Notes
The record gives the reactivity of an RNA of 177 nucleotides to DMS and 2A3. Values cover nucleotides 27 to 126. The DMS profile rests on 2,876 reads. 2A3 adducts were read by reverse transcription with SuperScript II with manganese. For DMS the reverse transcriptase was MarathonRT.
RNA sequence: GGGAACGACUCGAGUAGAGUCGAAAAGUCUAGGCGCAAUGAUGUCGCUCUUCAACAACAACUGGCAACAUGUCUUAUUGACAAUCUCGGUAGGUAGCUUGAUCAUCUUUAUCUUAUGGCUCGUCUACGAUAUUAGGCUCUUCGGAGCCUAAUAUCGAAAAGAAACAACAACAACAAC
Reactivity to DMS in 0.01 (KOAc 150mM, MgCl2 10mM, bicine 150mM(pH8.5), 24C), signal-to-noise 3, nucleotides 027 to 126: g020u000c050u000a080g010g000c050g000c080a090a100u010g010a090u010g010u000c030g010c020u000c060u010u010c070a070a100c110a050a040c100a050a050c110u000g000g020c050a060a060c120a070u000g000u010c010u010u010a150u030u010g000a050c030a080a080u000c040u000c070g000g010u000a040g020g010u000a040g000c040u000u010g000a110u000c050a030u000c050u000u000u000a080u030c030u000u010a110u000g020g000c030u000c060g020u010c040u020a130
Reactivity to 2A3 in 0.01 (KOAc 150mM, MgCl2 10mM, bicine 150mM(pH8.5), 24C), signal-to-noise 3, nucleotides 027 to 126: g020u000c020u030a030g070g000c030g000c060a060a150u190g060a080u060g110u110c010g010c030u000c010u140u120c030a120a110c000a020a020c010a030a040c050u050g010g000c000a020a000c010a140u060g030u000c010u090u260a280u090u160g030a030c010a030a090u020c020u010c060g100g000u050a040g000g020u010a020g000c010u030u080g040a030u040c020a050u010c020u090u100u040a080u040c010u070u130a070u100g050g000c010u020c050g040u040c080u030a020